Record summary: Structure probing data (2A3 and DMS) for a 207-nucleotide construct. Reactivities are given for positions 27 through 156. For DMS the reverse transcriptase was MarathonRT.
RNA sequence: GGGAACGACUCGAGUAGAGUCGAAAAGCCGCGGCAAGUGGAGUUAGCGAGAAGAAACUAGGCUUUGGUUUCUUCAAGUGAAGCGGUCACCAAUCAGGUGUGGUAGUUACCGUAAAAAAUCCGGAUUAAUGCCUCAGCGCGUUCGCGCGCUGAGGAAGUAAUCUAUAACGUUCGCGUUAUAGAUUACAAAAGAAACAACAACAACAAC
Reactivity to 2A3 in 0.01 (KOAc 150mM, MgCl2 10mM, bicine 150mM(pH8.5), 24C), signal-to-noise 4, nucleotides 027 to 156: g020c000c000g010c020g030g030c060a090a090g030u100g050g070a080g040u200u140a020g040c040g020a040g010a030a000g000a000a000a010c010u030a060g260g080c110u180u150u180g020g010u000u000u020c000u010u000c000a030a010g000u040g010a030a010g000c000g030g020u040c030a020c030c000a010a100u140c070a030g080g040u070g020u050g090g020u040a050g050u100u100a050c000c020g030u070a090a090a030a000a030a090u090c070c040g010g010a040u120u160a150a060u200g040c010c000u000c000a010g000c000g000c000g030u040u060c170g000c000g000c020g000c060u000g000a000g000g000a000a000
Reactivity to DMS in 0.01 (KOAc 150mM, MgCl2 10mM, bicine 150mM(pH8.5), 24C), signal-to-noise 2, nucleotides 027 to 156: g030c050c030g080c050g040g030c050a090a130g010u000g020g010a110g000u020u000a280g060c000g000a300g020a060a020g000a040a030a010c000u000a040g040g010c220u000u000u010g040g010u000u000u000c020u000u000c020a020a300g010u000g000a110a180g020c000g040g000u000c000a100c020c020a070a170u010c070a070g010g000u000g020u000g020g010u000a030g000u000u000a060c050c010g050u010a000a080a080a040a120a160u020c060c010g000g010a300u000u000a080a100u000g010c010c000u000c000a010g020c000g010c000g000u000u000c300g050c050g030c000g010c000u010g020a060g000g000a000a020
Conditions: 150 mM KOAc, 10 mM MgCl2 and 150 mM bicine (pH 8.5), 24 C.